[RMDB]
RNA sequence: GGGAACGACUCGAGUAGAGUCGAAAACUCAAAUGGAAUAUUGUCGCACCCCAUGCACUGUCAGUUGCAAUAUUCCUGUGGUGUCUGGCAAAGAAUGUGAGGAAAUUAUCAGGAAAGGAGGUGAAAAGUCAUGACGUGAGUUCGCUCACGUCAUGACAAAAGAAACAACAACAACAAC
Reactivity to DMS in 0.01 (KOAc 150mM, MgCl2 10mM, bicine 150mM(pH8.5), 24C), signal-to-noise 2, nucleotides 027 to 126: c000u000c020a090a110a080u000g000g000a070a030u000a020u000u000g020u000c110g070c080a200c080c030c030c050a160u000g000c020a070c130u010g020u000c070a070g030u010u020g000c010a030a030u000a030u000u000c010c030u010g000u030g060g020u000g020u000c060u000g020g020c060a060a090a060g010a070a070u000g010u000g000a080g000g000a030a060a070u000u000a050u020c070a170g080g000a060a040a040g000g000a040g000g010u000g020a050a090a070a070